[RMDB]
RNA sequence: GGGAACGACUCGAGUAGAGUCGAAAAGAUAUGGAUCGAUGUUUAGGUCCGUACAGACAUGACCGGAUAGUCGGAAACGACUAGAAGGUCAACAGCUGUACGGACCUAAACCGCUCGAUCCUAAGUCCAAUCAUGCUCAGUUCGCUGAGCAUGAUUGAAAAGAAACAACAACAACAAC
Reactivity to DMS in 0.01 (KOAc 150mM, MgCl2 10mM, bicine 150mM(pH8.5), 24C), signal-to-noise 2, nucleotides 027 to 126: g030a090u010a250u030g040g000a010u000c000g000a000u000g010u000u000u010a030g000g010u000c020c000g000u000a010c000a000g010a040c050a300u000g010a010c010c010g010g020a300u000a010g000u000c000g010g020a090a150a180c010g020a010c000u010a000g010a300a300g000g000u000c000a040a010c300a180g000c000u000g000u000a000c000g010g040a000c010c000u000a010a010a010c010c030g000c010u000c000g010a000u000c000c000u000a000a070g000u000c040
Structure probing data (DMS) for a 177-nucleotide construct. Source: RMDB library TTRINS, as collected in RNAgym. The RNA was probed in 150 mM KOAc, 10 mM MgCl2 and 150 mM bicine (pH 8.5) at 24 C. For DMS, 1,499 sequencing reads were counted.